[RMDB]
Conditions: 150 mM KOAc, 10 mM MgCl2 and 150 mM bicine (pH 8.5), 24 C. Structure probing data (DMS and 2A3) for a 177-nucleotide construct.
RNA sequence: GGGAACGACUCGAGUAGAGUCGAAAAUCACGUAGGGGAUGACAUCUGUCGUAGCUUUGCACAAUACGAGGCUGUCAAAGUUCUCUUGCAAGGAACUGACAACAGGUCACUUCAUGUACUGUGUGAAGAUAGUUAUCUCAUUCGUGAGGUAACUAUCAAAAGAAACAACAACAACAAC
Reactivity to DMS in 0.01 (KOAc 150mM, MgCl2 10mM, bicine 150mM(pH8.5), 24C), signal-to-noise 9, nucleotides 027 to 126: u020c030a030c040g010u010a050g010g010g000g010a080u010g000a050c100a090u020c080u010g010u000c050g020u010a080g010c030u010u000u000g010c020a030c190a040a060u020a060c100g010a050g010g010c010u000g010u020c140a050a080a010g000u000u010c000u010c020u000u040g010c220a130a120g000g000a020a020c020u010g010a100c300a060a030c060a020g000g010u020c090a140c060u010u010c060a100u030g020u010a040c060u000g010u000g000u000g000a040a060
Reactivity to 2A3 in 0.01 (KOAc 150mM, MgCl2 10mM, bicine 150mM(pH8.5), 24C), signal-to-noise 9, nucleotides 027 to 126: u070c010a010c030g020u040a040g000g060g010g030a110u040g010a010c010a080u100c080u080g050u040c030g050u050a030g010c010u030u030u040g010c010a030c030a070a080u120a100c080g010a010g040g000c010u030g060u180c030a050a040a010g010u170u050c030u000c000u030u100g030c040a040a030g020g000a030a070c020u060g040a010c020a030a010c010a020g040g050u060c030a030c090u050u040c040a100u190g030u070a030c030u050g010u000g010u010g060a030a030
For DMS the reverse transcriptase was MarathonRT. For 2A3, 98,552 sequencing reads were counted. The DMS profile rests on 102,655 reads. High DMS reactivity at an A or C suggests that its Watson-Crick edge is free.